[RMDB]
RNA sequence: GGGAACGACUCGAGUAGAGUCGAAAAUAGUUUUGAUCUAAACCAAUUACUUCAUGUCUUGAUUGCCUGUGACCUCGAGAAGAAACCUGGUUUCAAGUUCUAAAAGGUGCCAGCUUUUGCUCAUCAGCAUAUCUACGAGAUUCGUCUCGUAGAUAUGAAAAGAAACAACAACAACAAC
Reactivity to DMS in 0.01 (KOAc 150mM, MgCl2 10mM, bicine 150mM(pH8.5), 24C), signal-to-noise 7, nucleotides 027 to 126: u010a060g010u000u000u010u010g000a100u010c060u000a070a090a120c050c040a090a090u010u000a090c050u000u000c050a060u000g000u000c030u010u000g000a090u010u000g020c040c030u000g000u010g000a080c050c060u000c070g010a080g010a080a120g000a050a070a070c110c070u000g010g010u000u000u000c040a070a110g010u010u000c070u000a050a040a100a100g000g010u000g010c060c040a060g010c060u000u000u010u000g010c030u000c060a080u010c110a100g000
Reactivity to 2A3 in 0.01 (KOAc 150mM, MgCl2 10mM, bicine 150mM(pH8.5), 24C), signal-to-noise 5, nucleotides 027 to 126: u090a020g020u060u050u050u150g080a090u020c030u110a050a030a100c020c010a050a070u120u060a070c010u040u070c040a060u110g050u020c020u030u100g050a110u080u160g050c020c020u080g030u060g070a040c000c010u040c050g090a080g010a150a020g030a050a050a020c030c070u070g010g030u030u060u030c040a080a030g010u050u000c040u090a030a080a040a030g040g010u020g060c040c020a020g000c060u070u070u090u140g000c010u030c040a120u010c010a050g060